Notes:
Chemical mapping of a 207-nucleotide RNA with 2A3. The RNA was probed in 150 mM KOAc, 10 mM MgCl2 and 150 mM bicine (pH 8.5) at 24 C. High 2A3 reactivity points to a flexible backbone, as in loops and unpaired stretches. 2A3 adducts were read by reverse transcription with SuperScript II with manganese.
RNA sequence: GGGAACGACUCGAGUAGAGUCGAAAACCCUCGCUGCAUAAGCAAGCGACCGCGUGUCUGUCAGCCUAGGGAAGUCCCUGACCUAGAUCCUGGCAUCGACUAAGGGACUUGCUGUUCAAUCGCGUCAGCGGGGUUGAACAGGACUUUUACCGUUGACCAGUAUGCCUAUCUUCGGAUAGGCAUACUGAAAAGAAACAACAACAACAAC
Reactivity to 2A3 in 0.01 (KOAc 150mM, MgCl2 10mM, bicine 150mM(pH8.5), 24C), signal-to-noise 3, nucleotides 027 to 156: c000c000c000u010c010g010c010u060g000c060a190u170a300a140g010c080a100a000g030c030g030a050c070c070g120c100g070u220g060u140c050u070g050u010c010a000g020c010c000u010a020g000g000g020a150a130g000u000c010c000c000u000g110a030c010c000u030a030g000a040u080c000c010u020g030g000c040a120u150c060g110a100c050u070a070a120g010g000g010a000c030u030u300g000c000u000g000u000u010c000a010a000u000c000g000c010g000u000c000a000g000c000g000g010g010g010u000u000g020a010a000c010a000g010g000a010c010u270u170u230u210a020c000c000g000u000u000g000a000c000